[RMDB]
RNA sequence: GGGAACGACUCGAGUAGAGUCGAAAACUGAAUGUCCUGAUAGGAUAGGAAGAUAACCUCUUUGCAACAGUUUAUACGGUCCUUUCAAAUCAUCAUGUCAUUUGCUCCUCAUAGCAACCUGAGAAGUCAGUAGUCAGUAUCUUUACCAUACCUGCUACCCUACGACGUGAUUCGUCACGUCGUAGGGAAAAGAAACAACAACAACAAC
Reactivity to 2A3 in 0.01 (KOAc 150mM, MgCl2 10mM, bicine 150mM(pH8.5), 24C), signal-to-noise 2, nucleotides 027 to 156: c010u000g040a050a040u050g030u030c000c000u080g100a080u110a080g050g000a030u030a040g070g010a020a040g030a120u090a090a010c030c000u020c020u140u130u130g070c060a130a060c040a160g020u000u050u070a140u050a050c050g030g000u050c020c000u030u080u150c080a080a070a040u040c000a010u000c010a040u110g010u020c020a040u010u030u060g030c030u010c000c000u020c000a030u090a060g000c030a050a010c000c010u030g000a020g010a160a020g050u010c030a010g020u060a010g000u020c010a000g010u020a030u010c040u040u100u000a080c020c010a020u010a060c000c010u030g050c020u080a120

Record summary:
Conditions: 150 mM KOAc, 10 mM MgCl2 and 150 mM bicine (pH 8.5), 24 C. Chemical mapping of a 207-nucleotide RNA with 2A3. Values are in units of 0.01, from 0 to 300, in steps of 10. For 2A3, 1,268 sequencing reads were counted.